[RMDB]
RNA sequence: GGGAACGACUCGAGUAGAGUCGAAAAGGAGAACAGCUGUUGCGCCGACGCGGCGACGUUGGCCGCGGCGUCUCGGUAGUCGGCCAGCGCCGACAGCGCGCCGUAUUUCCAGUCCGCCUGUUUGGCCGUGUGCAAAGAUAUUCGUAUCUUUGCACACAAAAGAAACAACAACAACAAC
Reactivity to 2A3 in 0.01 (KOAc 150mM, MgCl2 10mM, bicine 150mM(pH8.5), 24C), signal-to-noise 5, nucleotides 027 to 126: g130g020a060g010a090a030c030a050g040c030u070g030u300u200g070c070g000c040c010g030a030c030g010c020g210g010c070g100a110c030g060u070u060g060g000c040c000g010c020g020g010c010g040u020c020u000c030g020g060u130a110g060u060c020g010g020c020c050a090g030c040g010c030c000g030a030c020a030g030c030g010c020g000c040c010g020u040a140u020u060u000c020c000a020g060u050c020c030g020c000c030u140g050u120u080u110g060g000c060c050
Reactivity to DMS in 0.01 (KOAc 150mM, MgCl2 10mM, bicine 150mM(pH8.5), 24C), signal-to-noise 6, nucleotides 027 to 126: g000g010a100g010a070a070c080a120g020c050u000g000u010u010g020c120g020c030c020g000a050c050g000c050g010g010c090g020a030c050g010u000u000g010g020c070c060g020c030g010g020c020g000u000c030u000c040g010g010u000a120g020u000c040g000g010c010c070a100g010c120g010c010c020g020a060c080a080g000c090g010c020g010c030c010g010u000a100u000u000u000c030c010a150g000u010c060c050g010c050c020u000g020u000u000u000g010g010c080c230